RNA sequence: GGGAACGACUCGAGUAGAGUCGAAAAUGCGGCUGCGCGAGCACGACGGCCGUGACGGCGUGGUGAUCUCGCGAUGACCCCAAGGCACCUGCUGACCGCCGCCGACCUCAGCCGCGACGACGCCACCCAAUCCUCGCAAGUUCGCUUGCGAGGAUUGAAAAGAAACAACAACAACAAC
Reactivity to DMS in 0.01 (KOAc 150mM, MgCl2 10mM, bicine 150mM(pH8.5), 24C), signal-to-noise 2, nucleotides 027 to 126: u000g040c010g010g020c020u000g000c040g000c000g030a030g010c000a030c040g000a060c040g040g020c020c000g010u010g000a150c210g040g000c030g020u000g030g000u000g000a120u030c020u000c010g020c040g010a060u000g010a210c090c010c040c060a080a140g000g020c030a060c160c070u000g030c050u000g010a080c120c080g010c010c020g040c040c030g010a080c100c020u010c030a040g020c030c020g000c020g000a060c040g010a070c040g000c060c030a110c030c050
Reactivity to 2A3 in 0.01 (KOAc 150mM, MgCl2 10mM, bicine 150mM(pH8.5), 24C), signal-to-noise 1, nucleotides 027 to 126: u130g000c020g000g000c000u060g000c020g020c050g010a030g050c020a020c060g190a000c000g150g160c030c010g040u130g130a100c190g010g000c030g020u060g080g000u030g060a090u040c000u010c000g010c030g000a020u040g040a070c010c000c010c040a010a030g030g000c020a020c060c030u060g000c080u040g030a070c050c010g030c000c000g000c000c020g060a140c010c000u040c010a010g030c000c000g010c010g000a000c030g000a010c030g070c010c020a030c080c020